Description: The data come from the RNA Mapping Database (RMDB), libraries RFM100 and RFMREP. An RNA of 177 nucleotides, treated with DMS and 2A3 and read out base by base. DMS adducts were read by reverse transcription with MarathonRT. In probing experiments dimethyl sulfate is read out at A N1 and C N3, which are open when not base-paired.
RNA sequence: GGGAACGACUCGAGUAGAGUCGAAAAUGCAAUGAAACCAUUCAGCAUUUUGAAGAUGAGAAAGUGACGAUACUUUACGGAACGUGCGGACAGUGCAACUGCCAUCUUAAAGAGGAAGAAUAGAAAAAGAAUUGAGAGUUUUCGAACUCUCAAUUCUAAAAGAAACAACAACAACAAC
Reactivity to DMS in 0.01 (KOAc 150mM, MgCl2 10mM, bicine 150mM(pH8.5), 24C), signal-to-noise 5, nucleotides 027 to 126: u010g010c040a120a070u010g010a080a120a170c170c120a100u010u010c040a100g010c010a010u000u000u020u010g000a070a070g000a060u000g000a120g000a040a060a070g010u000g010a080c090g020a100u020a050c030u030u000u010a120c090g000g020a080a080c090g020u010g020c060g000g000a050c140a050g020u000g000c040a060a050c060u000g010c010c030a060u010c050u000u010a060a090a100g010a080g010g020a060a050g000a060a060u010a090g000a040a060a070a070
Reactivity to 2A3 in 0.01 (KOAc 150mM, MgCl2 10mM, bicine 150mM(pH8.5), 24C), signal-to-noise 8, nucleotides 027 to 126: u030g000c070a030a070u060g060a080a060a120c120c040a050u020u040c010a070g090c030a030u030u030u040u100g100a080a020g030a050u120g020a010g040a120a070a010g050u060g040a050c050g010a030u040a120c040u080u070u050a050c060g030g040a080a020c040g040u060g030c040g020g050a040c020a050g020u050g090c030a050a020c000u010g000c020c010a020u040c020u050u170a100a080a010g100a010g090g020a040a040g020a090a060u140a110g120a030a080a020a010